[RMDB]
RNA sequence: GGGAACGACUCGAGUAGAGUCGAAAAGAUAUGGACGAUCCUACCCACCGUUGAGGUGGCGUUGAAAUAAUAAGCUCGGAAACGAGCUUAUUAUGGAGCCAUGGAGACGAGGGAUCGUCCUAAGUCAGACAUUGUAUCAGUUCGCUGAUACAAUGUCAAAAGAAACAACAACAACAAC
Reactivity to DMS in 0.01 (KOAc 150mM, MgCl2 10mM, bicine 150mM(pH8.5), 24C), signal-to-noise 3, nucleotides 027 to 126: g030a130u000a210u000g010g000a020c000g020a010u000c000c030u020a170c070c030c010a300c090c000g000u020u000g010a300g010g010u010g000g000c000g010u000u020g000a100a090a000u000a010a000u010a010a010g010c010u000c000g030g010a040a060a160c000g020a000g000c000u000u000a000u030u000a010u010g010g000a130g000c000c000a000u000g030g020a300g000a000c000g000a150g000g000g000a020u000c000g000u000c000c000u000a010a070g000u000c160a180
Reactivity to 2A3 in 0.01 (KOAc 150mM, MgCl2 10mM, bicine 150mM(pH8.5), 24C), signal-to-noise 2, nucleotides 027 to 126: g140a070u300a250u300g000g000a010c010g020a000u010c010c020u160a300c070c020c000a030c020c000g000u000u040g020a070g020g230u020g000g010c000g020u170u100g000a030a000a010u000a010a010u000a010a000g020c020u030c030g020g020a070a120a040c010g040a000g000c000u000u000a010u000u000a000u000g040g020a020g010c000c010a020u040g090g020a020g000a010c010g000a020g010g000g000a000u000c000g010u000c000c000u000a000a000g070u090c080a020